RNA sequence: GGGAACGACUCGAGUAGAGUCGAAAAUCUUGACAAACCUUCGGGUUUGUCAAGAAAAAAACCUUUGUGUGUGGCUUCGUUGAUCCGUGCCCAUUGGGCAUUGGGGAGAAGCACACACUCUGGUAAAAAGCGAAAUAAACUUCGGUUUAUUUCGCAAUGUUACACUGUUCUUCGGAACAGUGUAACAAAAAGAAACAACAACAACAAC
Reactivity to 2A3 in 0.01 (KOAc 150mM, MgCl2 10mM, bicine 150mM(pH8.5), 24C), signal-to-noise 1, nucleotides 027 to 156: u030c010u010u030g010a000c030a000a000a010c030c040u030u040c200g080g000g000u000u000u000g030u010c000a000a010g000a000a000a000a000a000a000a000c040c010u050u000u000g010u010g010u000g020u020g300g110c010u000u010c010g300u230u020g020a000u000c000c030g000u000g010c000c060c140a300u160u300g000g000g000c030a010u130u300g000g000g000g000a000g000a010a000g040c000a000c000a000c000a000c000u000c000u000g000g010u050a050a140a100a070a000g020c000g000a000a000a000u010a000a010a000c000u020u090c190g060g000u000u010u000a000u000u000u000c000g000c010a000a000